The data come from the RNA Mapping Database (RMDB), library OK1LIB. The record gives the reactivity of an RNA of 177 nucleotides to DMS and 2A3. The 2A3 profile rests on 1,081 reads. The RNA was probed in 150 mM KOAc, 10 mM MgCl2 and 150 mM bicine (pH 8.5) at 24 C.
[RMDB]
RNA sequence: GGGAACGACUCGAGUAGAGUCGAAAAGGACAGAGUGUCAUGUGAGGCUGUGUCAGAUCAGUCUGUGUCCUGGGACCACCAGAGCAUGUGCCAGUGGUGCAAGAGUGGCCAAGAGACAGUCUGCACCUAAAAGGCCGUGGUUCGCCACGGCCUUUUAAAAAGAAACAACAACAACAAC
Reactivity to DMS in 0.01 (KOAc 150mM, MgCl2 10mM, bicine 150mM(pH8.5), 24C), signal-to-noise 2, nucleotides 027 to 126: g000g010a070c020a040g000a030g030u020g000u000c100a120u010g000u000g020a070g000g010c020u000g000u000g000u020c080a080g000a080u010c040a030g020u000c010u010g000u010g000u000c030c010u000g030g010g000a280c140c050a040c030c050a090g000a230g040c040a050u020g030u050g000c000c070a120g050u010g000g010u020g010c030a050a060g020a160g000u000g020g000c030c030a110a110g010a130g000a040c000a000g000u020c010u000g000c030a010c020c000
Reactivity to 2A3 in 0.01 (KOAc 150mM, MgCl2 10mM, bicine 150mM(pH8.5), 24C), signal-to-noise 2, nucleotides 027 to 126: g060g010a010c020a030g150a060g120u110g110u150c040a040u260g100u060g120a040g000g000c010u020g000u040g020u110c000a030g070a160u030c000a010g030u000c000u030g050u050g090u020c020c000u000g030g020g040a100c030c010a030c000c030a050g040a020g100c020a060u090g030u120g090c000c020a150g010u030g080g000u020g040c010a090a060g070a010g120u000g030g010c010c010a060a030g000a010g000a000c000a000g110u000c010u040g000c040a040c020c000